An RNA of 177 nucleotides, treated with 2A3 and read out base by base.

RNA sequence: GGGAACGACUCGAGUAGAGUCGAAAAUAGGGCUUUUCUUGGAAGCAUGACAUCACCAACUUCGCUGCCGUAGCAGCUCGUACUCACGCCUCAGCUCAAGAUGUUUUCUCCAUCUCUCAAAGCCUUGGCAAUCCGAAACGUUCGCGUUUCGGAUUGCAAAAGAAACAACAACAACAAC
Reactivity to 2A3 in 0.01 (KOAc 150mM, MgCl2 10mM, bicine 150mM(pH8.5), 24C), signal-to-noise 2, nucleotides 027 to 126: u150a040g020g000g020c020u090u000u010u040c070u010u070g050g050a010a070g030c100a070u060g000a010c020a070u060c060a060c040c060a080a080c030u100u140c080g000c030u050g000c010c030g160u100a020g020c000a000g020c000u000c050g050u090a050c000u000c060a070c040g010c000c000u060c030a030g000c010u040c020a020a000g010a050u010g030u030u060u000u050c000u000c010c000a030u060c060u010c010u000c100a040a000a080g000c000c000u010u070g050

The 2A3 profile rests on 1,232 reads.